[RMDB]
RNA sequence: GGGAACGACUCGAGUAGAGUCGAAAAGGGCUGUUUUCUUACGGGGUGUACAGCUACCAAUCCCCCGGAAGCACCACAGGCGAAGGGCGGAUGGCAAAUUAUGAAUACCUCCGUUAACGAUAUUACGUACCAGCAUAGUGUUCGCACUAUGCUGGUAAAAAGAAACAACAACAACAAC
Reactivity to 2A3 in 0.01 (KOAc 150mM, MgCl2 10mM, bicine 150mM(pH8.5), 24C), signal-to-noise 2, nucleotides 027 to 126: g020g010g030c020u020g020u000u050u050u040c010u050u050a000c020g000g000g000g030u100g030u010a040c060a020g040c040u040a050c000c000a080a300u010c000c000c000c000c010g050g030a050a010g000c010a020c170c040a050c050a070g190g010c010g030a020a030g050g000g020c110g000g010a020u010g010g000c050a040a040a050u220u130a200u290g080a030a030u040a040c000c000u060c060c000g000u020u050a080a050c020g080a070u050a080u300u250a120c080g030
Reactivity to DMS in 0.01 (KOAc 150mM, MgCl2 10mM, bicine 150mM(pH8.5), 24C), signal-to-noise 3, nucleotides 027 to 126: g010g000g040c050u000g010u000u010u010u010c030u000u000a020c020g020g010g000g110u000g010u000a040c010a100g020c070u000a040c030c020a080a150u000c010c000c010c000c020g000g000a190a110g010c050a120c130c170a140c300a060g010g000c010g020a300a150g000g000g010c120g010g030a270u010g000g030c120a030a060a150u000u020a080u000g000a170a140u000a020c000c000u000c010c000g020u010u020a020a080c120g010a130u000a080u000u000a100c200g020
This 177-nucleotide RNA was probed chemically with 2A3 and DMS.
The 2A3 profile rests on 1,822 reads.
The RNA was probed in 150 mM KOAc, 10 mM MgCl2 and 150 mM bicine (pH 8.5) at 24 C.
It was measured as part of the RMDB library OK2TRN.